[RMDB]
RNA sequence: GGGAACGACUCGAGUAGAGUCGAAAAAGCGAGGAGCGCGAGGGCAAUUAUGGAUUGCACCGCUAUGCCGUGGAUUCCGAGGAGAGAGCGGUGCGGCGCCGCCUGGAGCACGGCGAGGCUGCAGCUGAGCGUCCAUAAUCUUCGGAUUAUGGACGCUAAAAGAAACAACAACAACAAC
Reactivity to DMS in 0.01 (KOAc 150mM, MgCl2 10mM, bicine 150mM(pH8.5), 24C), signal-to-noise 3, nucleotides 027 to 126: a060g000c050g010a050g000g000a050g000c030g010c040g000a160g000g000g020c030a050a050u040u030a100u030g000g000a080u000u000g010c000a040c000c020g000c050u030a110u050g000c020c000g040u000g010g010a180u020u030c040c000g020a060g000g000a110g000a110g040a110g020c000g000g000u020g030c040g000g020c060g000c020c010g000c060c020u000g000g000a050g000c050a020c040g000g000c000g000a080g000g000c060u000g000c030a090g000c060u010g010
Reactivity to 2A3 in 0.01 (KOAc 150mM, MgCl2 10mM, bicine 150mM(pH8.5), 24C), signal-to-noise 5, nucleotides 027 to 126: a000g060c060g010a110g000g040a050g000c070g000c050g020a130g050g000g000c040a040a040u160u070a100u300g190g040a080u040u080g010c060a060c030c010g000c020u040a070u230g030c010c020g030u040g050g000a190u120u050c020c030g050a030g040g010a100g010a010g000a000g040c000g000g030u050g080c020g000g030c020g010c000c010g020c000c010u050g000g020a040g010c020a000c030g020g000c000g010a060g030g000c050u030g020c000a000g020c020u040g060